About this RNA:
Chemical mapping of a 177-nucleotide RNA with DMS and 2A3. For DMS, 4,814 sequencing reads were counted. The data come from the RNA Mapping Database (RMDB), library VIROID. The reactions ran in a buffer of 150 mM KOAc, 10 mM MgCl2 and 150 mM bicine (pH 8.5), at 24 C.
RNA sequence: GGGAACGACUCGAGUAGAGUCGAAAAGGGGCAACUCUUCUCAGAAUCCAGCGAGAGGCGUAGGAGAGAGGGCCGCGGUGCUCUGGAGUAGAGGCUUCUUGCUUCGAAACACCAUCGAUCGUCCCUUAAUAGUAACAUUCUUCGGAAUGUUACUAUUAAAAGAAACAACAACAACAAC
Reactivity to DMS in 0.01 (KOAc 150mM, MgCl2 10mM, bicine 150mM(pH8.5), 24C), signal-to-noise 5, nucleotides 027 to 126: g010g000g000g010c080a090a090c010u000c010u010u010c020u000c050a130g000a190a150u000c020c020a180g010c170g010a130g010a050g010g020c170g010u000a080g000g000a050g000a070g010a070g010g000g000c050c010g000c020g000g000u000g000c010u000c000u010g000g000a070g000u000a080g000a010g000g000c000u010u000c250u000u020g010c020u000u000c000g000a180a110a140c010a010c150c000a020u000c010g010a110u000c070g000u000c000c000c000u010u010
Reactivity to 2A3 in 0.01 (KOAc 150mM, MgCl2 10mM, bicine 150mM(pH8.5), 24C), signal-to-noise 4, nucleotides 027 to 126: g040g000g020g000c010a030a070c020u020c000u080u020c020u010c000a060g260a110a090u010c020c010a050g130c120g110a300g020a040g250g030c050g060u140a020g000g040a020g000a000g010a020g040g020g010c010c010g050c010g020g000u000g000c000u000c010u020g030g000a000g010u010a000g000a010g030g010c010u140u050c060u200u300g000c000u010u000c010g000a010a000a000c000a020c080c000a010u000c000g000a130u060c030g030u010c010c000c000u000u010